[RMDB]
RNA sequence: GGGAACGACUCGAGUAGAGUCGAAAAAGAAAGCAAAAAUUGUCAGUGCUAUGCAAACUAUGUUGUUUGGUAUGAUUAAGAAGCUCGACAACGAUGUUCUUAAUGGUAUCAUUUCUAACGCUAGGAACCCCACCAAACUUCGGUUUGGUGAAAAGAAACAACAACAACAAC
Reactivity to 2A3 in 0.01 (KOAc 150mM, MgCl2 10mM, bicine 150mM(pH8.5), 24C), signal-to-noise 9, nucleotides 027 to 129: a020g100a020a010a000g040c030a030a040a080a090a140u170u150g060u120c080a040g060u020g060c040u060a050u180g050c020a020a040a060c050u050a050u190g040u040u020g020u000u050u000g020g000u010a010u040g170a010u150u000a000a000g010a010a020g100c020u010c020g050a070c040a160a140c060g020a050u220g030u060u000c000u010u010a020a010u030g110g000u020a000u010c000a010u000u050u020c040u100a010a020c030g070c070u030a010g020g040a060a080c020c000c000